[RMDB]
RNA sequence: GGGAACGACUCGAGUAGAGUCGAAAAGACGAACGAAAACACAAAUGUUCCACGGUGCAGAAGGGUCCCUCACAUGAGGAUCACCCAUGUAACUGGGACAGGAUAUGCUUUUGGGAAAAAGAGAGAAGUUUUCGACUUCAUUCGUGAAGUCGAAAACAAAAGAAACAACAACAACAAC
Reactivity to DMS in 0.01 (KOAc 150mM, MgCl2 10mM, bicine 150mM(pH8.5), 24C), signal-to-noise 1, nucleotides 027 to 126: g020a170c030g000a170a090c020g000a000a060a020a020c030a050c060a050a200a200u000g010u010u000c010c000a050c270g010g010u000g010c010a030g000a120a110g010g000g000u010c110c000c000u000c030a120c260a200u010g020a010g000g000a030u000c140a020c000c000c010a110u000g010u000a000a030c020u040g000g070g010a020c000a010g000g010a160u000a020u010g000c040u010u000u000u000g010g020g000a000a080a040a160a110g000a120g000a040g000a070a100
Reactivity to 2A3 in 0.01 (KOAc 150mM, MgCl2 10mM, bicine 150mM(pH8.5), 24C), signal-to-noise 1, nucleotides 027 to 126: g110a010c030g040a170a000c000g000a010a010a050a010c030a010c020a000a040a120u050g000u020u010c030c010a030c080g110g000u010g000c000a020g090a300a140g040g020g010u000c030c000c000u010c010a250c030a190u300g020a010g000g000a050u140c030a020c000c000c000a000u010g000u000a040a050c010u030g000g040g000a030c030a020g020g010a070u110a030u150g010c000u060u040u030u060g020g080g040a050a050a020a040a040g090a000g000a000g070a210a030
Chemical mapping of a 177-nucleotide RNA with DMS and 2A3. It was measured as part of the RMDB library M2PK90. Values cover nucleotides 27 to 126. The DMS profile rests on 694 reads. Conditions: 150 mM KOAc, 10 mM MgCl2 and 150 mM bicine (pH 8.5), 24 C.